Description: Structure probing data (2A3 and DMS) for a 177-nucleotide construct. For DMS the reverse transcriptase was MarathonRT. Source: RMDB library OK1LIB, as collected in RNAgym. For 2A3, 1,598 sequencing reads were counted. For DMS, 3,911 sequencing reads were counted.
[RMDB]
RNA sequence: GGGAACGACUCGAGUAGAGUCGAAAACGGCACCACGAUUAUGCAUACACGUCGGUUGUCCGAAUCCGUGGUGCAGCUAUGAUGACGCGGAUAUACAUUCGCACGAACGAUGUGAGGAGUUAAUCCAAGAGUCAUACUUGUUCGCAAGUAUGACUCUAAAAGAAACAACAACAACAAC
Reactivity to 2A3 in 0.01 (KOAc 150mM, MgCl2 10mM, bicine 150mM(pH8.5), 24C), signal-to-noise 3, nucleotides 027 to 126: c000g000g010c000a010c030c000a000c010g000a000u040u050a030u200g030c060a060u070a080c030a000c050g110u040c050g040g060u100u090g060u000c000c060g010a000a060u040c060c020g000u020g030g000u040g000c040a040g060c020u110a060u300g010a090u160g020a050c050g000c050g040g000a000u070a010u020a100c070a080u010u040c010g000c000a010c030g070a110a000c020g010a020u070g000u020g000a030g000g000a090g020u090u150a040a060u010c000c010a000
Reactivity to DMS in 0.01 (KOAc 150mM, MgCl2 10mM, bicine 150mM(pH8.5), 24C), signal-to-noise 3, nucleotides 027 to 126: c040g000g000c000a000c000c000a000c030g000a220u020u070a040u010g040c080a200u000a140c110a060c020g000u010c040g000g000u000u010g000u010c100c050g000a050a030u010c030c020g050u020g000g000u000g010c040a030g020c140u020a050u000g020a020u010g000a070c230g000c000g010g010a020u000a180u050a100c150a020u020u000c000g040c070a150c080g000a150a040c020g020a030u010g000u000g000a080g020g000a070g000u000u000a080a210u000c030c030a100
2A3 adducts were read by reverse transcription with SuperScript II with manganese. High 2A3 reactivity points to a flexible backbone, as in loops and unpaired stretches.